[RMDB]
Structure probing data (2A3 and DMS) for a 177-nucleotide construct.
For DMS the reverse transcriptase was MarathonRT.
Reactivities are given for positions 27 through 126.
For DMS, 484 sequencing reads were counted.

RNA sequence: GGGAACGACUCGAGUAGAGUCGAAAAGUCACCAACUGGCAUUACCACGUCUGCAUCAGGACGAUGAAAUCGGUAUGCUGGUGCGCAGUUACAACCUCAAUCAGCAAUUGCUGCAGCGCCAUUAUGAGUUGUCCCCGUUUUUCGAAACGGGGACAACAAAAGAAACAACAACAACAAC
Reactivity to 2A3 in 0.01 (KOAc 150mM, MgCl2 10mM, bicine 150mM(pH8.5), 24C), signal-to-noise 1, nucleotides 027 to 126: g050u010c050a060c140c020a010a020c080u060g000g090c040a020u000u080a020c010c000a020c000g010u060c030u020g090c020a230u120c000a100g090g000a000c000g020a040u120g120a020a080a070u140c040g000g000u000a000u020g020c010u000g000g010u000g000c030g000c010a020g000u100u000a120c040a070a090c040c010u150c070a110a220u100c010a030g000c010a030a290u220u120g010c020u000g000c030a040g000c010g000c000c030a030u120u100a120u260g130a110
Reactivity to DMS in 0.01 (KOAc 150mM, MgCl2 10mM, bicine 150mM(pH8.5), 24C), signal-to-noise 1, nucleotides 027 to 126: g000u000c000a100c040c060a110a090c030u000g040g030c000a030u000u000a040c010c020a180c090g000u000c000u000g030c170a070u000c200a040g080g000a010c020g000a210u000g000a080a130a120u000c230g000g010u000a040u000g000c070u000g000g000u000g000c050g030c030a040g000u000u000a010c040a080a160c140c000u000c100a240a100u030c080a050g070c020a170a090u050u000g000c000u000g010c250a080g000c000g050c000c020a200u000u010a060u000g020a190